[RMDB]
RNA sequence: GGGAACGACUCGAGUAGAGUCGAAAACCAAUGGGAAACCAUUGGCAACUCGGAAACGAGUUGAACCCGGAAUUAGAUAUGAAACGGGCGACAAUGCGAUUUUAAGCAUUGUCGAUUACGCCCAUGUCGAUUUUAAGACAUGGAGCGAACAUAUCAACGAACGAUGUCCGUUCGCGGACGUUGUUCGAAAAGAAACAACAACAACAAC
Reactivity to 2A3 in 0.01 (KOAc 150mM, MgCl2 10mM, bicine 150mM(pH8.5), 24C), signal-to-noise 5, nucleotides 027 to 156: c000c000a000a000u000g000g000g000a050a010a020c000c000a000u000u000g010g000c000a000a000c000u000c000g000g020a050a030a020c000g000a000g000u000u000g010a030a030c000c000c000g000g010a050a020u090u040a050g000a000u010a000u000g030a050a050a020c020g000g000g000c000g000a000c000a000a000u000g000c010g080a120u020u060u060u270a080a010g000c000a000u000u000g000u000c000g000a000u000u000a010c000g000c000c000c000a000u000g000u000c000g010a030u040u030u060u260a090a010g000a000c000a000u000g000g000a030g010c000g000a000a000c000a000u000a000u010c010a010a020
Reactivity to DMS in 0.01 (KOAc 150mM, MgCl2 10mM, bicine 150mM(pH8.5), 24C), signal-to-noise 5, nucleotides 027 to 156: c010c010a010a030u000g000g010g020a260a200a230c000c000a020u000u000g010g010c020a030a020c000u000c000g010g010a140a110a230c010g010a030g010u010u000g000a110a250c000c000c000g000g000a170a180u010u010a140g010a060u000a030u000g010a090a080a120c110g030g000g010c000g020a030c010a010a010u000g000c000g010a280u000u010u020u000a130a300g010c000a000u000u010g010u000c000g010a050u000u000a040c000g040c000c000c000a000u000g020u000c010g000a210u010u000u010u020a100a170g010a010c010a000u010g000g000a060g010c010g010a050a120c000a020u000a010u000c000a090a210